[RMDB]
RNA sequence: GGGAACGACUCGAGUAGAGUCGAAAAAGAUCGUGCAGAACAUGACCGCAUUUUGUCUUGGUGGCGGGGGUACGCAGCAAAAGCUAAACUACCCUCGAAUGCUUUGUUUUUCAUGACUGACUAUCAAGAGCUAAAUAGUGUUCGCACUAUUUAGCUCAAAAGAAACAACAACAACAAC
Reactivity to DMS in 0.01 (KOAc 150mM, MgCl2 10mM, bicine 150mM(pH8.5), 24C), signal-to-noise 4, nucleotides 027 to 126: a060g010a050u000c030g020u010g000c050a060g020a050a180c050a020u000g010a120c160c180g010c090a060u010u000u010u010g010u000c070u010u000g000g020u000g000g000c000g010g010g000g000g000u000a020c050g000c300a010g000c000a050a070a080a140g000c010u000a040a140a140c300u000a020c010c000c010u000c010g000a040a030u000g000c030u000u010u000g000u000u000u000u000u020c030a040u000g010a030c030u020g000a120c060u000a100u010c110a070a140
Reactivity to 2A3 in 0.01 (KOAc 150mM, MgCl2 10mM, bicine 150mM(pH8.5), 24C), signal-to-noise 2, nucleotides 027 to 126: a000g030a080u060c020g010u050g070c020a020g000a070a020c010a040u040g020a060c000c040g020c050a020u050u070u110u180g190u070c050u030u130g110g020u090g050g000c010g000g000g000g000g000u020a000c030g020c040a000g000c020a140a230a180a080g000c010u060a070a040a030c000u000a000c010c010c000u000c000g010a040a020u020g020c000u070u070u130g080u040u080u030u030u060c020a030u040g030a020c010u030g030a010c010u030a040u200c040a110a100
Source information
This 177-nucleotide RNA was probed chemically with DMS and 2A3. For DMS the reverse transcriptase was MarathonRT. Source: RMDB library OK2TST, as collected in RNAgym. Conditions: 150 mM KOAc, 10 mM MgCl2 and 150 mM bicine (pH 8.5), 24 C. The DMS profile rests on 2,881 reads.